[RMDB]
RNA sequence: GGGAACGACUCGAGUAGAGUCGAAAAAGUAUUGCCUAAGUUGAAUUCAGCUUUAACUGGCAUUUGUUGAGCCCCUACUAAUAGCUCAUUGUCUAGGAAGUAUUGUUUUCCUCCUGCUCUAUAAGUAAAGAACCAGAAACUCAUUUACCCAACAUUAGGAUAGUAAAUCAUUCGUGAUUUACUAUCCAAAAGAAACAACAACAACAAC
Reactivity to 2A3 in 0.01 (KOAc 150mM, MgCl2 10mM, bicine 150mM(pH8.5), 24C), signal-to-noise 4, nucleotides 027 to 156: a000g090u050a060u070u080g020c010c020u070a080a050g010u010u040g040a110a070u180u130c040a040g040c040u030u070u050a080a040c030u040g000g010c010a030u080u080u160g070u030u030g030a020g000c010c010c030c000u010a050c010u030a040a140u030a070g000c010u010c070a030u050u110g020u070c040u040a010g020g040a050a030g030u040a050u120u090g100u020u070u010u030c000c000u000c000c010u000g030c030u020c010u040a040u010a100a050g040u040a070a110a100g020a030a040c030c010a020g090a070a010a010c010u030c010a050u060u030u110a060c000c020c010a070a030c030a100u010u110a030
Reactivity to DMS in 0.01 (KOAc 150mM, MgCl2 10mM, bicine 150mM(pH8.5), 24C), signal-to-noise 3, nucleotides 027 to 156: a140g020u000a060u000u010g020c010c020u010a120a160g030u000u000g020a100a150u010u000c090a090g010c110u000u000u010a060a060c070u000g010g010c040a090u010u000u010g010u000u010g010a160g040c030c010c030c040u000a190c070u010a080a100u000a050g020c010u000c020a070u010u010g000u000c020u000a120g030g000a080a090g030u000a070u000u010g010u000u000u010u000c020c010u010c040c030u000g000c020u000c010u010a100u000a040a140g010u000a030a070a090g010a060a030c040c020a050g010a110a040a050c030u010c040a120u000u000u000a080c000c010c010a080a230c070a090u000u000a210